[RMDB]
Structure probing data (2A3 and DMS) for a 177-nucleotide construct. For 2A3 the reverse transcriptase was SuperScript II with manganese. The RNA was probed in 150 mM KOAc, 10 mM MgCl2 and 150 mM bicine (pH 8.5) at 24 C.
RNA sequence: GGGAACGACUCGAGUAGAGUCGAAAAGGUGCAUGGGUUCAUUACGAAAGAGGAGUACCAGAGGCUCAAAGAGGAGGUGGAGAAGACUAUACAAUCUACGAUACACAGUGCACUCCAGGAGCACUGAAAAUUUAGUAGUGUUCGCACUACUAAAUUUAAAAGAAACAACAACAACAAC
Reactivity to 2A3 in 0.01 (KOAc 150mM, MgCl2 10mM, bicine 150mM(pH8.5), 24C), signal-to-noise 4, nucleotides 027 to 126: g060g010u070g020c030a030u110g040g000g030u060u080c020a030u100u190a060c060g040a050a040a040g060a020g040g010a020g000u030a040c000c020a010g030a020g080g000c020u030c090a090a100a000g050a030g020g000a020g000g020u060g030g000a080g010a090a020g020a010c030u060a030u040a220c040a040a060u010c020u090a050c060g040a030u050a150c110a000c010a050g000u020g010c020a000c040u050c030c020a040g040g030a030g000c000a010c000u000g000a060
Reactivity to DMS in 0.01 (KOAc 150mM, MgCl2 10mM, bicine 150mM(pH8.5), 24C), signal-to-noise 9, nucleotides 027 to 126: g020g010u000g000c060a060u000g010g020g010u010u000c060a070u010u010a110c110g000a060a090a090g010a070g000g000a090g020u000a070c060c050a080g010a110g000g000c050u010c070a050a080a090g010a070g000g000a050g010g010u000g000g010a070g010a060a060g010a060c080u000a080u010a070c150a070a070u000c060u000a070c140g010a100u010a100c170a150c020a020g000u000g000c020a070c060u000c090c120a090g000g000a140g000c020a020c020u000g000a040

For DMS, 16,200 sequencing reads were counted.